[RMDB]
RNA sequence: GGGAACGACUCGAGUAGAGUCGAAAACUAGGAAAACCGAAAACAGUUCUAGACAGACCUGCGGUUUUAUAGCAGUUUUGGCAGUCAACUUCAGCUUGUGCCUGAGCAGACGGGGUUGUGGUGGCCCCAGACAAUCGGGGUUCGCCCCGAUUGUCUGAAAAGAAACAACAACAACAAC
Reactivity to DMS in 0.01 (KOAc 150mM, MgCl2 10mM, bicine 150mM(pH8.5), 24C), signal-to-noise 2, nucleotides 027 to 126: c010u010a040g010g000a060a030a080a020c040c000g000a080a060a110a300c030a080g050u010u000c010u020a090g030a120c150a050g000a060c040c000u000g020c020g020g030u030u010u020u000a050u040a100g020c160a070g010u010u000u000u030g020g000c040a050g000u010c020a040a030c020u010u020c080a060g000c050u020u010g020u000g010c070c060u000g000a100g000c100a090g030a060c070g000g000g000g020u000u000g040u010g010g020u000g000g040c010c000c020
Reactivity to 2A3 in 0.01 (KOAc 150mM, MgCl2 10mM, bicine 150mM(pH8.5), 24C), signal-to-noise 1, nucleotides 027 to 126: c020u050a070g090g080a020a070a000a000c020c020g060a020a020a070a100c040a000g000u020u010c000u010a040g060a190c130a030g000a010c000c000u000g010c000g000g070u030u010u020u010a100u030a020g160c040a000g000u000u000u000u000g060g000c030a070g080u130c000a060a050c020u090u040c060a070g010c070u060u100g040u140g110c020c030u030g010a000g050c040a000g000a090c000g000g020g000g000u010u010g000u050g060g040u010g020g060c010c010c030